[RMDB]
RNA sequence: GGGAACGACUCGAGUAGAGUCGAAAACAGGAAUCUACAGUUCAUGUAGUGCAGUCAGGCACUGUCACAGUCCACUUCAGUACCGCCAGCCCGCAAGCCAAUUUCGUCAUUUCGCUGUGCGGUAAGAUGCAACCUAAAUAUUCGUAUUUAGGUUGCAAAAAGAAACAACAACAACAAC
Reactivity to 2A3 in 0.01 (KOAc 150mM, MgCl2 10mM, bicine 150mM(pH8.5), 24C), signal-to-noise 5, nucleotides 027 to 126: c030a020g060g040a030a050u020c010u050a050c020a030g020u080u190c050a040u150g030u050a040g010u010g010c010a010g050u070c030a040g110g040c050a000c040u020g040u080c060a010c010a090g030u010c010c010a060c010u080u070c090a040g080u030a020c010c000g010c000c000a010g000c020c010c030g030c050a020a030g010c030c060a080a090u050u120u110c090g090u070c080a110u070u120u120c070g000c000u020g090u110g060c000g020g000u000a020a010g030a000
Reactivity to DMS in 0.01 (KOAc 150mM, MgCl2 10mM, bicine 150mM(pH8.5), 24C), signal-to-noise 8, nucleotides 027 to 126: c080a090g000g010a080a050u010c030u010a060c080a070g020u000u010c140a100u000g020u000a030g010u000g020c040a070g010u010c110a130g010g010c070a100c020u010g010u000c050a050c110a100g010u000c030c030a080c140u010u010c090a090g010u000a030c030c020g010c030c020a050g000c040c130c100g000c110a050a090g010c060c090a050a110u000u000u000c140g000u010c090a090u010u010u000c150g010c000u000g010u010g020c000g010g000u000a010a030g010a150